[RMDB]
RNA sequence: GGGAACGACUCGAGUAGAGUCGAAAAGUCUAGCGAAUGGAUCCCACCCGGGAGACACGCAAGUCGCGAAUUAAGCCGACCGGCCAAGGUCAAUUGCAGAACUCAACUGCAUGAGUAAGCUAGACGAAAUCACUGAGGACUUCGGUCCUCAGUGAUUAAAAGAAACAACAACAACAAC
Reactivity to DMS in 0.01 (KOAc 150mM, MgCl2 10mM, bicine 150mM(pH8.5), 24C), signal-to-noise 1, nucleotides 027 to 126: g000u000c000u000a000g000c020g000a180a230u000g000g000a130u000c000c000c000a110c300c020c060g000g020g000a150g000a000c000a140c030g040c000a090a100g000u000c180g040c020g010a150a060u000u000a060a140g000c000c010g000a140c020c000g000g000c000c000a140a140g030g000u000c030a040a040u000u000g000c000a010g000a090a130c070u050c210a030a050c000u010g010c010a010u000g000a170g000u010a060a300g000c000u000a000g000a010c020g000a100
Reactivity to 2A3 in 0.01 (KOAc 150mM, MgCl2 10mM, bicine 150mM(pH8.5), 24C), signal-to-noise 1, nucleotides 027 to 126: g000u030c000u010a010g010c030g080a060a090u180g180g010a060u020c010c010c000a000c030c010c010g000g010g010a060g010a010c010a040c040g010c020a070a100g290u160c010g020c010g060a110a180u280u060a300a060g000c000c010g040a020c000c000g050g000c030c010a020a010g020g000u010c000a010a030u050u010g000c000a010g010a180a080c010u070c240a000a120c040u050g000c000a000u000g030a050g110u030a000a020g010c010u020a010g000a000c000g000a010
Structure probing data (DMS and 2A3) for a 177-nucleotide construct. 2A3 adducts were read by reverse transcription with SuperScript II with manganese. Reactivities are given for positions 27 through 126. The RNA was probed in 150 mM KOAc, 10 mM MgCl2 and 150 mM bicine (pH 8.5) at 24 C.